RNA sequence: GGGAACGACUCGAGUAGAGUCGAAAAGGUGGGAGGAUCACUUGAGCUUAGGAGUUUAAGACCAGCCUGGGCAACAUAGUGAGACCUCAUUUCUACUAAGAUUAAAAAAUUAGCAGGUGUAGUGGCAUGCAUCUGUGGUCCCAGCUACUUAGCAUGCCUCUUGCCUUCUCUUCGGAGAAGGCAAGAGAAAAGAAACAACAACAACAAC
Reactivity to 2A3 in 0.01 (KOAc 150mM, MgCl2 10mM, bicine 150mM(pH8.5), 24C), signal-to-noise 1, nucleotides 027 to 156: g080g020u080g010g090g000a040g040g000a030u000c010a000c000u000u050g000a000g000c040u000u050a010g040g000a020g110u120u220u300a140a080g090a090c010c050a020g090c000c060u020g020g010g000c000a000a000c050a070u220a040g040u000g000a000g000a000c010c000u020c000a010u040u160u070c000u000a000c000u010a030a100g000a180u210u220a000a000a000a000a090a090u160u100a080g040c020a010g050g010u060g040u150a100g000u050g050g000c030a010u090g000c000a040u010c050u060g040u000g040g000u020c000c000c000a000g010c000u060a040c030u130u070a040g030c040a010u030g010c000